[RMDB]
This 177-nucleotide RNA was probed chemically with DMS and 2A3. Conditions: 150 mM KOAc, 10 mM MgCl2 and 150 mM bicine (pH 8.5), 24 C. 2A3 adducts were read by reverse transcription with SuperScript II with manganese. As a SHAPE reagent, 2A3 marks flexible, mostly unpaired nucleotides at the ribose 2'-OH. For 2A3, 29,501 sequencing reads were counted. Reactivities are given for positions 27 through 126.
RNA sequence: GGGAACGACUCGAGUAGAGUCGAAAAAGUGAUGGCGCGAGGCCAGGCCGAGUACUCUGAUCCUGAUCUAGCGCCGUACGAUCGUACGUACGAGAGGCGCAGUACUCGAGUACGCGCUAUCGGCCGGCGUGUCUCGGUAAUUCGUUACCGAGACACGAAAAGAAACAACAACAACAAC
Reactivity to DMS in 0.01 (KOAc 150mM, MgCl2 10mM, bicine 150mM(pH8.5), 24C), signal-to-noise 9, nucleotides 027 to 126: a090g010u000g000a040u000g010g010c010g010c030g010a110g000g000c060c070a120g000g000c090c050g000a050g020u000a050c080u000c110u000g000a090u010c060c080u010g010a070u000c050u000a150g010c020g010c060c000g020u000a000c010g010a110u010c230g000u010a110c020g010u000a010c000g010a210g010a120g000g000c020g020c100a070g010u010a020c010u000c040g000a170g010u000a040c010g000c030g010c000u000a030u000c010g010g010c030c020g010g010
Reactivity to 2A3 in 0.01 (KOAc 150mM, MgCl2 10mM, bicine 150mM(pH8.5), 24C), signal-to-noise 5, nucleotides 027 to 126: a000g280u190g030a050u070g010g010c010g000c020g030a040g050g080c040c020a030g030g000c010c010g010a020g030u070a070c050u020c080u130g070a120u110c020c070u100g040a070u030c040u060a040g010c000g000c020c000g000u010a000c000g000a030u170c090g040u130a150c020g000u020a010c010g020a040g010a080g270g000c030g000c100a030g010u080a020c000u010c030g020a020g010u030a040c010g000c010g000c010u010a020u030c010g050g000c030c020g030g000